[RMDB]
Notes
An RNA of 177 nucleotides, treated with DMS and 2A3 and read out base by base. For DMS the reverse transcriptase was MarathonRT. Values are in units of 0.01, from 0 to 300, in steps of 10. The RNA was probed in 150 mM KOAc, 10 mM MgCl2 and 150 mM bicine (pH 8.5) at 24 C. The data come from the RNA Mapping Database (RMDB), library TTRDES. Values cover nucleotides 27 to 126.
RNA sequence: GGGAACGACUCGAGUAGAGUCGAAAAGAUAUGGAAGGCUGAAGGACAUGCUGAUGACUCGGAAACGAGUCAAUAGCAACAGCCUUUCAGCCUUCCUAAGUCAAACUUCUUCCCUUCGGGGAAGAAGCACAUACUCCGAGUUCGCUCGGAGUAUGUGAAAAGAAACAACAACAACAAC
Reactivity to DMS in 0.01 (KOAc 150mM, MgCl2 10mM, bicine 150mM(pH8.5), 24C), signal-to-noise 5, nucleotides 027 to 126: g000a050u000a300u010g000g010a010a010g000g000c000u000g000a020a010g010g000a040c030a230u010g010c010u020g000a120u010g000a010c000u000c000g010g000a130a100a220c010g010a000g010u000c000a000a060u000a040g010c000a030a090c300a170g010c020c000u000u000u000c000a000g000c010c010u000u000c000c000u000a030a070g010u000c060a100a080a240c010u000u000c010u000u000c000c000c000u000u000c260g040g000g010g000a010a000g000a010a000g010
Reactivity to 2A3 in 0.01 (KOAc 150mM, MgCl2 10mM, bicine 150mM(pH8.5), 24C), signal-to-noise 2, nucleotides 027 to 126: g020a030u060a010u140g010g000a000a030g000g020c010u030g000a010a010g020g010a050c080a190u170g000c010u040g030a140u020g010a030c000u000c020g020g010a050a070a040c010g000a010g000u000c010a010a020u070a000g010c010a020a090c010a060g100c000c000u000u010u000c000a010g000c010c000u000u010c000c000u000a000a000g000u000c010a000a010a080c000u000u010c000u030u000c010c000c000u020u030c300g050g000g000g000a000a000g010a000a000g000